[RMDB]
RNA sequence: GGGAACGACUCGAGUAGAGUCGAAAAGGACGAAAUCCGAUGGUGGAACCCAAACAAUUAUACAGUUUAUUCUGUAACUGAACCACCGACCACAGAAAUAACUGAAACCGAAGAAGCUUUUGGAUUACUAUCAUAGGGAGUUCGCUCCCUAUGAUAGAAAAGAAACAACAACAACAAC
Reactivity to DMS in 0.01 (KOAc 150mM, MgCl2 10mM, bicine 150mM(pH8.5), 24C), signal-to-noise 2, nucleotides 027 to 126: g000g040a080c060g030a120a100a300u020c010c020g010a190u020g010g020u010g000g020a190a090c050c000c010a100a070a130c140a050a070u000u000a130u020a170c000a010g000u000u010u010a090u020u000c000u000g040u020a040a060c100u000g000a090a110c030c020a020c030c030g000a120c140c100a030c000a000g010a070a080a200u000a050a070c040u000g000a130a060a090c040c060g000a020a060g030a080a080g000c060u020u000u000u010g000g010a170u000u010a140
Reactivity to 2A3 in 0.01 (KOAc 150mM, MgCl2 10mM, bicine 150mM(pH8.5), 24C), signal-to-noise 1, nucleotides 027 to 126: g000g010a010c030g140a070a000a070u000c010c040g030a070u060g060g020u020g010g040a100a090c000c030c000a050a100a000c070a110a020u290u200a160u090a230c000a030g010u010u000u140a130u100u000c010u010g010u040a040a040c070u030g080a080a040c000c000a010c040c030g000a040c020c020a030c010a040g060a020a080a040u220a060a000c050u050g010a150a050a030c000c070g030a130a020g040a110a040g110c000u100u000u090u100g070g000a030u050u050a140
The record gives the reactivity of an RNA of 177 nucleotides to DMS and 2A3. For DMS, 1,118 sequencing reads were counted. For DMS the reverse transcriptase was MarathonRT. It was measured as part of the RMDB library OK2TRN. The reactions ran in a buffer of 150 mM KOAc, 10 mM MgCl2 and 150 mM bicine (pH 8.5), at 24 C. High 2A3 reactivity points to a flexible backbone, as in loops and unpaired stretches.